[RMDB]
RNA sequence: GGGAACGACUCGAGUAGAGUCGAAAAUAGUGAGGCAACAUGCUGGGCGAUCAUUAACGGGUCGCCGCUAUUGUCAAUAAUGUCAUCAGCACAGGCCAAGCGUUGUUGCCGCGAAACCUGUGAAGCAACCGGUAUUACGAUUCGUCGUAAUACCGGUAAAAGAAACAACAACAACAAC
Reactivity to DMS in 0.01 (KOAc 150mM, MgCl2 10mM, bicine 150mM(pH8.5), 24C), signal-to-noise 5, nucleotides 027 to 126: u010a060g030u000g010a210g020g000c000a020a030c030a040u010g020c120u010g020g020g020c000g000a000u010c000a070u010u020a100a160c300g010g000g000u000c010g020c000c010g000c020u000a040u000u000g000u010c100a050a170u020a090a060u020g020u010c080a100u020c130a120g000c000a010c020a020g010g000c010c020a060a250g010c010g010u000u000g000u010u000g010c070c000g010c010g010a060a130a170c010c010u000g000u000g010a150a100g000c180a110
Reactivity to 2A3 in 0.01 (KOAc 150mM, MgCl2 10mM, bicine 150mM(pH8.5), 24C), signal-to-noise 4, nucleotides 027 to 126: u120a010g040u050g070a030g050g000c010a010a020c010a070u110g070c090u140g130g010g000c000g000a010u000c010a080u080u300a110a080c200g070g000g000u000c000g000c000c010g000c000u010a020u010u060g060u070c060a000a070u190a120a060u150g140u160c070a120u040c040a130g120c000a000c000a020g010g000c010c010a040a010g010c020g000u000u070g050u020u050g080c040c000g000c000g010a030a010a010c000c000u000g010u020g030a020a030g040c010a020